Annotation:
Chemical mapping of a 177-nucleotide RNA with DMS and 2A3. The RNA was probed in 150 mM KOAc, 10 mM MgCl2 and 150 mM bicine (pH 8.5) at 24 C. For DMS the reverse transcriptase was MarathonRT.
[RMDB]
RNA sequence: GGGAACGACUCGAGUAGAGUCGAAAAGCUGUUCUGUUCGCAGAACAGCAAAGGGAAGCAUCUCAACCAUUUCAAGGUAGGGAGCACCAAGCAUUUCAAAAAAAACGGAUAAGUUCGCUUAUCCGAAGCACUUGUAUUAGUUCGCUAAUACAAGUGCAAAAGAAACAACAACAACAAC
Reactivity to DMS in 0.01 (KOAc 150mM, MgCl2 10mM, bicine 150mM(pH8.5), 24C), signal-to-noise 2, nucleotides 027 to 126: g010c000u000g010u000u010c010u000g010u010u010c170g020c020a000g030a020a000c000a010g000c010a040a080a100g000g010g030a110a110g000c000a110u000c000u010c030a080a050c000c000a120u000u020u020c300a100a100g010g030u020a060g010g000g000a020g000c010a040c020c020a110a130g000c190a090u000u020u000c040a000a060a020a090a070a100a120a190c000g010g000a030u000a000a020g000u000u000c250g020c000u000u000a000u000c000c000g010a010a050
Reactivity to 2A3 in 0.01 (KOAc 150mM, MgCl2 10mM, bicine 150mM(pH8.5), 24C), signal-to-noise 3, nucleotides 027 to 126: g010c000u000g010u000u000c000u000g010u020u050c220g010c070a010g000a010a000c000a000g000c000a040a020a020g070g000g020a180a040g010c050a300u020c010u020c020a000a030c000c000a110u080u270u300c150a220a100g010g000u020a030g030g010g010a000g000c010a020c010c020a040a020g060c030a090u080u230u300c220a090a020a000a010a000a010a010a030c000g000g010a000u010a000a020g010u030u120c190g080c110u000u000a000u000c000c020g010a010a000